RNA sequence: GGGAACGACUCGAGUAGAGUCGAAAACCGCCGAAGCCGCGGCAUUCACAUAACACCCAUGCGGGUCUACGGGCCUGUGUGCAGUGGUGUGGAUGGGUAGGGGAGCGUCGUGCAGCCAUGGAAGCGCAUGAUACCCCACCUUCGGGUGGGGUAUCAUAAAAGAAACAACAACAACAAC
Reactivity to DMS in 0.01 (KOAc 150mM, MgCl2 10mM, bicine 150mM(pH8.5), 24C), signal-to-noise 1, nucleotides 027 to 126: c020c010g000c030c070g020a150a130g000c000c060g060c120g020g000c020a030u010u050c000a040c000a000u010a060a100c040a000c000c300c000a030u000g000c000g010g000g020u000c010u010a030c070g120g040g000c000c040u000g010u040g000u000g020c200a110g000u000g000g020u000g000u020g040g050a010u000g010g000g060u030a160g000g000g000g000a060g000c010g010u000c000g010u000g050c020a130g000c040c000a030u000g000g000a070a140g000c030g010c090
Reactivity to 2A3 in 0.01 (KOAc 150mM, MgCl2 10mM, bicine 150mM(pH8.5), 24C), signal-to-noise 1, nucleotides 027 to 126: c000c000g000c060c010g090a100a000g000c020c030g060c000g120g000c020a000u070u070c030a040c000a000u050a150a070c000a010c030c000c000a000u000g020c000g000g000g000u000c000u000a110c210g050g000g000c000c000u050g000u000g000u000g000c040a000g010u000g060g000u020g000u000g000g030a030u050g050g020g110u130a070g000g020g020g000a040g000c050g030u040c000g000u030g000c010a010g000c000c000a120u040g000g060a070a000g100c070g000c100